Conditions: 150 mM KOAc, 10 mM MgCl2 and 150 mM bicine (pH 8.5), 24 C.
Structure probing data (2A3 and DMS) for a 177-nucleotide construct.
DMS adducts were read by reverse transcription with MarathonRT.
For 2A3 the reverse transcriptase was SuperScript II with manganese.
Values cover nucleotides 27 to 126.
[RMDB]
RNA sequence: GGGAACGACUCGAGUAGAGUCGAAAAGGCAUAGAGGUGUUAGAAAACAUGAGACAAAAGUAAUCUUCUUGAUGCUAGCGUCUCAGGUAAUUAGCAGGUACUAGACAGUACCUGCUAAUUACUAUAUGUAAUAUACCUGGUUCGCCAGGUAUAUUACAAAAGAAACAACAACAACAAC
Reactivity to 2A3 in 0.01 (KOAc 150mM, MgCl2 10mM, bicine 150mM(pH8.5), 24C), signal-to-noise 2, nucleotides 027 to 126: g040g000c040a010u090a070g110a080g080g080u090g080u150u090a060g080a060a150a010a020c090a050u100g000a000g000a010c020a010a030a010a000g020u130a170a160u000c020u270u000c040u090u220g010a010u010g010c000u000a010g010c000g020u000c000u000c000a000g000g010u010a000a010u020u000a000g030c000a000g050g010u010a000c000u060a060g240a250c130a030g020u020a000c000c010u020g000c000u000a000a000u000u000a000c000u000a000u010a000u000
Reactivity to DMS in 0.01 (KOAc 150mM, MgCl2 10mM, bicine 150mM(pH8.5), 24C), signal-to-noise 3, nucleotides 027 to 126: g000g000c040a070u000a080g010a040g000g010u000g030u000u010a110g000a080a040a110a090c180a100u000g010a000g020a020c010a020a300a130a020g010u000a050a050u000c020u000u010c170u010u000g010a030u000g000c010u000a050g000c300g010u000c000u000c010a070g000g000u010a000a000u010u010a000g010c000a000g000g000u000a010c000u010a100g020a090c230a090g030u010a020c000c000u000g010c000u000a000a000u000u000a000c000u000a040u000a100u010